[RMDB]
RNA sequence: GGGAACGACUCGAGUAGAGUCGAAAAUAAAUCAAGGAGAAUUUGUGGCUAUAGUUGGUCCUUCAGGUUCUGGUAAAAGUACAUUACUUCAUCUUUUAGGGGGAGUAGAUAGACCAAGCUCAGGUAAGGCAUUUAAAUCCUUCGGGAUUUAAAUGCCAAAAGAAACAACAACAACAAC
Reactivity to DMS in 0.01 (KOAc 150mM, MgCl2 10mM, bicine 150mM(pH8.5), 24C), signal-to-noise 1, nucleotides 027 to 126: u030a030a040a140u050c090a070a040g000g030a100g000a010a040u040u010u020g030u000g000g000c020u000a040u000a170g010u050u040g000g000u000c040c020u000u000c160a160g000g020u000u000c070u000g020g000u030a000a080a100a000g060u050a180c200a100u010u010a000c020u010u000c160a070u030c060u010u070u070u000a040g040g030g000g030g000a010g000u000a000g000a040u020a100g050a010c040c070a040a120g000c020u000c070a080g000g030u020a090a110
Reactivity to 2A3 in 0.01 (KOAc 150mM, MgCl2 10mM, bicine 150mM(pH8.5), 24C), signal-to-noise 1, nucleotides 027 to 126: u240a020a140a000u180c100a000a050g150g030a010g080a120a070u070u080u080g010u110g030g000c000u000a000u010a300g130u000u170g030g060u000c030c030u010u030c030a030g010g010u000u130c000u110g010g000u070a150a140a000a000g000u030a000c070a130u070u070a040c000u000u000c030a300u060c000u080u210u080u300a290g000g040g000g030g000a000g000u000a010g000a110u070a000g070a070c000c000a000a000g040c000u000c000a000g030g010u100a210a000
Annotation: Chemical mapping of a 177-nucleotide RNA with DMS and 2A3. The 2A3 profile rests on 275 reads.